[RMDB]
RNA sequence: GGGAACGACUCGAGUAGAGUCGAAAAUAAGUCGGUGGCAGACAGCGGCGGUGCAGGCGGGGGAUUGCCCAAGCGGCAGAGGACGGAGGGCGUGCUGCAGGACGCUGACAUGAACACCCUGGUCCCCGUAAUACAUGAGCUUCGGCUCAUGUAUUACAAAAGAAACAACAACAACAAC
Reactivity to DMS in 0.01 (KOAc 150mM, MgCl2 10mM, bicine 150mM(pH8.5), 24C), signal-to-noise 3, nucleotides 027 to 126: u010a100a090g010u020c090g030g040u000g020g030c030a110g000a090c060a050g010c060g000g010c040g020g000u000g030c050a050g000g010c100g000g000g000g010g010a140u000u010g000c010c020c030a080a150g020c100g000g000c030a070g010a140g000g020a050c090g000g000a180g010g000g000c050g030u000g000c040u010g000c030a050g000g010a070c070g000c030u000g010a080c070a100u010g000a060a090c100a080c020c010c020u000g010g000u000c010c010c010c300
Reactivity to 2A3 in 0.01 (KOAc 150mM, MgCl2 10mM, bicine 150mM(pH8.5), 24C), signal-to-noise 2, nucleotides 027 to 126: u220a060a000g080u070c050g000g020u040g020g000c030a020g030a130c010a020g000c000g050g000c020g050g060u040g020c040a040g050g000c050g040g020g030g000g030a070u040u150g010c020c000c000a100a040g060c090g020g010c040a030g060a050g120g060a030c060g000g070a050g020g010g030c040g050u090g010c020u010g010c000a030g030g020a000c040g030c050u010g020a010c010a050u050g010a050a020c030a040c050c020c000u040g030g020u020c020c000c020c010